Chemical mapping of a 177-nucleotide RNA with DMS and 2A3. 2A3 adducts were read by reverse transcription with SuperScript II with manganese. The 2A3 profile rests on 718 reads. DMS adducts were read by reverse transcription with MarathonRT.
RNA sequence: GGGAACGACUCGAGUAGAGUCGAAAAUAUAGCCAGCACGGGCCGAAAGUAGGCGCUUGGAAGAACUCCCGCCCAUGUUUCAGGUUUCCGAAUUUUAUAGGCGCGUGCUGCCGUGAGCCUACAAGGGUUGUAGUUGCCAUUUCGAUGGCAACUACAAAAAAGAAACAACAACAACAAC
Reactivity to DMS in 0.01 (KOAc 150mM, MgCl2 10mM, bicine 150mM(pH8.5), 24C), signal-to-noise 2, nucleotides 027 to 126: u040a130u040a110g000c220c010a020g000c000a030c010g000g010g020c010c010g010a070a020a050g000u000a080g000g040c300g000c050u000u000g000g030a040a010g000a190a110c120u000c000c030c000g000c040c020c070a220u010g000u000u000u010c010a010g010g040u000u000u010c000c000g040a010a080u020u210u000u010a080u020a070g000g010c000g010c030g030u000g050c000u000g000c050c030g000u010g000a130g000c030c030u000a040c110a080a130g000g000g000
Reactivity to 2A3 in 0.01 (KOAc 150mM, MgCl2 10mM, bicine 150mM(pH8.5), 24C), signal-to-noise 1, nucleotides 027 to 126: u290a060u130a030g040c030c010a020g000c010a000c020g050g050g000c000c000g040a030a050a030g020u000a010g030g000c000g000c010u000u050g000g060a070a080g000a040a040c010u070c020c000c000g040c020c030c010a050u110g050u040u030u020c000a000g000g000u090u120u030c010c000g020a000a010u170u280u200u160a080u070a040g000g020c070g000c000g170u000g000c000u000g010c010c000g010u060g050a010g030c020c060u110a180c060a150a110g020g010g000
Description:
It was measured as part of the RMDB library RFM100. For DMS, 1,882 sequencing reads were counted.